[RMDB]
RNA sequence: GGGAACGACUCGAGUAGAGUCGAAAAACAUAGGCCAUGCUUACGAGCAUGGCCUAUGACGAAUCUCAAGCAAUCGAGCAUUCUACUUCUAUUGCAACACUGAGGAGCUUACGAGCUCCUCAGUGAAAAAAGAGAGUAAUGUUCGCAUUACUCUCAACAAAGUAUAUCUCUUCGGAGAUAUACUUUGAAAAGAAACAACAACAACAAC
Reactivity to DMS in 0.01 (KOAc 150mM, MgCl2 10mM, bicine 150mM(pH8.5), 24C), signal-to-noise 1, nucleotides 027 to 156: a130c010a010u010a000g040g020c010c000a030u000g030c000u000u000a150c300g050a150g010c000a020u000g060g010c000c010u040a000u000g000a110c000g000a120a100u010c010u010c060a090a180g010c060a070a090u000c030g020a120g020c070a110u010u000c050u000a050c090u010u000c110u000a080u000u020g040c010a140a180c020a020c010u000g000a010g020g000a050g040c000u000u000a080c250g040a100g000c000u010c000c010u000c000a000g000u010g000a000a010a060a180a100a100g010a030g000a050g010u000a020a010u000g010u000u010c300g020c030a050u010u000a000c010u000c010u000c000a040a090
Reactivity to 2A3 in 0.01 (KOAc 150mM, MgCl2 10mM, bicine 150mM(pH8.5), 24C), signal-to-noise 1, nucleotides 027 to 156: a000c000a000u000a000g030g030c000c000a020u000g000c010u160u130a110c260g100a000g030c020a000u000g000g000c000c000u000a000u010g000a000c020g040a030a050u020c010u020c030a030a040g000c010a000a040u010c080g020a000g010c020a110u300u040c030u100a170c010u060u010c000u020a010u000u050g000c040a120a030c000a060c010u020g000a000g000g000a010g000c000u050u030a110c220g050a020g000c000u050c000c000u000c000a000g010u000g010a030a000a000a000a000a000g000a000g000a000g000u000a000a000u000g020u080u090c180g030c070a000u000u000a000c000u000c000u000c000a030a000
Structure probing data (DMS and 2A3) for a 207-nucleotide construct. The 2A3 profile rests on 912 reads.